[RMDB]
Chemical mapping of a 207-nucleotide RNA with 2A3.
RNA sequence: GGGAACGACUCGAGUAGAGUCGAAAACCCCGAGGGUCAGGAUUCGGCUCGAGCGAAGUGAUUGUCAGAUAGAACAGGAUCGCCGCCUAGUACGUUGUGGACGACGUGGCUAAACAUUACACAACUCGCUCCAAGCACCCUGCCACUCGGGCGGUGACUCAGGUUGAAACUUCGGUUUCAACCUGAGAAAAGAAACAACAACAACAAC
Reactivity to 2A3 in 0.01 (KOAc 150mM, MgCl2 10mM, bicine 150mM(pH8.5), 24C), signal-to-noise 2, nucleotides 027 to 156: c000c000c000c000g010a000g020g030g010u190c020a010g000g020a050u200u240c110g100g000c010u020c020g000a000g010c000g080a180a080g040u070g110a190u230u180g030u050c060a030g060a090u120a070g080a230a050c070a070g060g000a040u020c010g000c020c000g040c010c010u020a040g090u100a060c070g000u050u090g300u190g300g040a020c040g010a040c010g030u000g030g000c040u110a090a100a020c050a140u190u300a050c010a000c000a050a090c040u000c000g000c000u000c000c000a130a010g030c000a040c010c000c000u010g030c020c010a220c050u000c000g000g000g010c020g000g120u040g010a000